[RMDB]
RNA sequence: GGGAACGACUCGAGUAGAGUCGAAAAGGAUGUCCCGACCGGAGGCCGACAAUCCAGGGAACCGGAUGUCAUCACGUUGUUGCAGUACCGGAUGGCAUCUUAAAUCCGAUCUGCAAAUAAGCAUGUAAAAACCGGCAUACGUUCGCGUAUGCCGGAAGACUCAAAGUAAGUUCGCUUACUUUGAGUCAAAAGAAACAACAACAACAAC
Reactivity to 2A3 in 0.01 (KOAc 150mM, MgCl2 10mM, bicine 150mM(pH8.5), 24C), signal-to-noise 1, nucleotides 027 to 156: g000g000a030u050g070u110c000c000c000g020a070c040c050g000g030a060g000g100c020c040g050a070c070a030a050u040c000c010a080g040g000g010a030a040c020c000g040g000a000u030g000u000c000a020u010c000a050c260g090u120u120g070u130u060g010c050a030g030u090a060c020c050g010g000a000u000g000g000c000a010u010c000u000u060a060a050a010u000c030c010g010a080u000c010u060g020c000a040a070a080u190a100a050g030c070a040u120g060u190a020a100a010a040a040c000c000g000g000c000a000u000a000c000g030u010u070c090g020c000g100u000a000u000g030c000c000g000g000a000a000
Reactivity to DMS in 0.01 (KOAc 150mM, MgCl2 10mM, bicine 150mM(pH8.5), 24C), signal-to-noise 2, nucleotides 027 to 156: g020g080a080u000g000u000c000c000c020g010a130c060c050g020g000a050g020g020c030c030g030a190c030a080a160u010c050c020a100g030g020g020a140a130c030c040g090g010a100u000g000u000c030a060u000c000a110c190g050u000u000g000u000u010g000c030a080g000u000a030c080c030g020g020a060u000g000g000c030a060u010c040u000u000a060a080a120u000c010c020g020a070u000c070u000g030c100a060a060a120u000a110a080g000c050a040u010g020u010a080a080a030a120a190c030c000g030g050c000a030u000a020c000g030u000u000c300g030c070g000u010a030u000g010c000c000g000g000a010a000
The record gives the reactivity of an RNA of 207 nucleotides to 2A3 and DMS. The DMS profile rests on 2,583 reads. The data come from the RNA Mapping Database (RMDB), library M2RFPK.